[RMDB]
RNA sequence: GGGAACGACUCGAGUAGAGUCGAAAAUCGGUAAGAUACAUGACAGCUGCACAGCAUCACUUCACGCGCUGUCAUCGGAUGUCUAGAACAUUCCUUCUAAGAAUAGCCACUGAAGAGUCUAUAAAGAGACGGUAACGUGCUUCGGCACGUUACCGUCAAAAGAAACAACAACAACAAC
Reactivity to 2A3 in 0.01 (KOAc 150mM, MgCl2 10mM, bicine 150mM(pH8.5), 24C), signal-to-noise 1, nucleotides 027 to 126: u040c000g000g000u180a010a000g000a040u000a010c010a000u040g000a000c000a020g040c010u300g010c000a000c010a120g100c000a040u170c050a070c000u280u120c080a080c080g000c000g000c000u000g100u000c000a000u000c010g000g000a040u000g000u000c000u020a010g120a000a000c000a000u100u000c000c000u000u120c050u120a000a000g170a010a010u060a100g000c030c000a090c020u000g090a130a000g030a000g050u000c000u080a180u000a180a300a000g300a000
An RNA of 177 nucleotides, treated with 2A3 and read out base by base. The RNA was probed in 150 mM KOAc, 10 mM MgCl2 and 150 mM bicine (pH 8.5) at 24 C. 2A3 adducts were read by reverse transcription with SuperScript II with manganese.